[RMDB]
RNA sequence: GGGAACGACUCGAGUAGAGUCGAAAACUCACUGAUUUGAUAUGUGAAUCACUCGGAGAUCCAGUUUUAAAGGAAAAAUACGAGAAGGAAUUGGACGCACUUAUUAGGAACCGAAGCAACACACAGGACGAGCAAGUUAGCAAUGGUUCGGGCGGUGGGAUGAAAUAGUCUUCGGACUAUUUCAUCCAAAAGAAACAACAACAACAAC
Reactivity to 2A3 in 0.01 (KOAc 150mM, MgCl2 10mM, bicine 150mM(pH8.5), 24C), signal-to-noise 2, nucleotides 027 to 156: c010u010c000a010c030u080g040a100u100u090u070g110a130u100a150u250g110u050g070a080a060u060c010a040c060u000c030g040g000a030g030a070u000c020c020a050g000u000u000u050u290a030a130a080g060g040a130a170a000a000a000u150a030c070g000a010g050a130a020g060g030a080a040u110u110g000g000a010c010g030c020a060c030u150u150a090u120u160a180g070g030a020a000c010c030g050a110a010g000c020a010a050c000a010c010a000c030a070g070g010a110c040g000a030g000c090a150a010g010u070u120a020g000c010a010a090u110g010g000u010u040c050g020g010g010c060g090g000u020g060
Structure probing data (2A3) for a 207-nucleotide construct. For 2A3, 715 sequencing reads were counted. 2A3 adducts were read by reverse transcription with SuperScript II with manganese. Conditions: 150 mM KOAc, 10 mM MgCl2 and 150 mM bicine (pH 8.5), 24 C. Values cover nucleotides 27 to 156.